[RMDB]
RNA sequence: GGGAACGACUCGAGUAGAGUCGAAAAGAUAUGGACACAACGAGCUGUCAUCGGAAACGAUGAUACAGCGAUGAGUUGGUCCUAAGUCAAACCACUUCAUAGGAUGUUCGCAUCCUAUGAAGUGGAACAAGUGUUAGCUGUUCGCAGCUAACACUUGAAAAGAAACAACAACAACAAC
Reactivity to 2A3 in 0.01 (KOAc 150mM, MgCl2 10mM, bicine 150mM(pH8.5), 24C), signal-to-noise 4, nucleotides 027 to 126: g040a010u070a040u110g000g010a070c110a000c010a300a010c020g040a030g020c000u000g000u030c000a010u000c000g010g050a060a070a070c030g020a020u010g020a030u120a100c010a010g010c040g030a120u190g070a040g010u010u010g000g000u000c000c000u020a160a010g060u020c060a080a020a100c000c000a000c000u010u000c000a000u000a000g000g000a000u020g030u060u090c280g020c160a000u040c000c010u010a000u000g000a000a000g000u000g000g000a000a000
Reactivity to DMS in 0.01 (KOAc 150mM, MgCl2 10mM, bicine 150mM(pH8.5), 24C), signal-to-noise 3, nucleotides 027 to 126: g000a040u000a300u010g000g000a030c010a150c020a010a000c000g010a210g020c010u000g010u000c000a000u000c000g000g000a100a090a130c010g000a010u010g010a110u000a040c000a010g010c000g000a100u000g000a190g010u000u000g000g000u010c000c000u000a020a070g000u000c040a110a080a220c000c000a010c000u000u000c000a000u000a000g000g000a010u000g000u000u030c270g020c020a000u000c000c000u000a000u000g000a000a010g020u000g000g000a040a090

Source: RMDB library TTRDEL, as collected in RNAgym. Structure probing data (2A3 and DMS) for a 177-nucleotide construct. The DMS profile rests on 3,667 reads. As a SHAPE reagent, 2A3 marks flexible, mostly unpaired nucleotides at the ribose 2'-OH. The reactions ran in a buffer of 150 mM KOAc, 10 mM MgCl2 and 150 mM bicine (pH 8.5), at 24 C. Values are in units of 0.01, from 0 to 300, in steps of 10.